RNA sequence: GGGAACGACUCGAGUAGAGUCGAAAAUGUCUCCGUUUACUAUUUCCCAACAGAGGACGAUGACGAGGAUGGGCCGACGUUCAAAGACAAGGCACUCGAAGUGAUCCUCAAAGGCAUCGAUGUGUUAUAUAAUCGACUGGUUCGCCAGUCGAUUAUAAAAAGAAACAACAACAACAAC
Reactivity to DMS in 0.01 (KOAc 150mM, MgCl2 10mM, bicine 150mM(pH8.5), 24C), signal-to-noise 2, nucleotides 027 to 126: u010g010u000c010u000c050c130g000u010u010u020a070c140u030a150u000u010u000c010c000c000a100a130c280a130g000a060g000g050a080c010g020a050u000g000a300c090g000a020g030g000a210u010g020g000g030c010c030g000a190c240g000u020u010c120a100a180a090g000a020c020a080a300g000g000c010a050c030u000c030g030a130a190g040u000g000a090u000c000c000u000c030a030a130a070g000g000c040a030u020c070g010a090u000g000u010g010u000u000a090